[RMDB]
RNA sequence: GGGAACGACUCGAGUAGAGUCGAAAACUUUAGACCUUGGCAUGGGUCAAGAAAUUUUAGUCUACAGCCCUAUUGUGUCCAUGACUAAAAUCCAAAAAACACCUUUACCAGAGAGAAAAGCACUACCGAUAUACUUAGCUUUCGAGCUAAGUAUAUCAAAAGAAACAACAACAACAAC
Reactivity to DMS in 0.01 (KOAc 150mM, MgCl2 10mM, bicine 150mM(pH8.5), 24C), signal-to-noise 4, nucleotides 027 to 126: c030u010u000u000a130g010a090c030c010u000u010g010g000c070a080u010g010g000g010u000c050a090a100g010a090a120a080u000u010u000u000a020g000u000c000u000a180c300a130g000c030c030c100u000a110u010u000g020u000g010u000c030c060a140u010g000a010c010u000a020a010a020a030u000c060c060a000a040a060a060a100a110c120a050c030c010u000u010u000a040c050c010a010g010a080g000a090g000a050a030a030a060g010c090a050c080u020a090c190c080
Reactivity to 2A3 in 0.01 (KOAc 150mM, MgCl2 10mM, bicine 150mM(pH8.5), 24C), signal-to-noise 4, nucleotides 027 to 126: c000u050u050u060a070g030a060c000c010u030u040g040g000c030a060u090g030g000g050u040c070a030a040g060a010a120a020u070u070u040u030a030g000u000c020u030a030c060a070g020c020c010c010u210a250u230u300g030u020g020u050c080c020a040u080g000a000c000u020a000a010a000a020u060c040c020a060a200a020a020a010a010c050a060c020c010u040u070u080a060c030c030a020g030a000g030a000g020a170a080a060a000g050c080a030c100u130a070c060c050

Chemical mapping of a 177-nucleotide RNA with DMS and 2A3.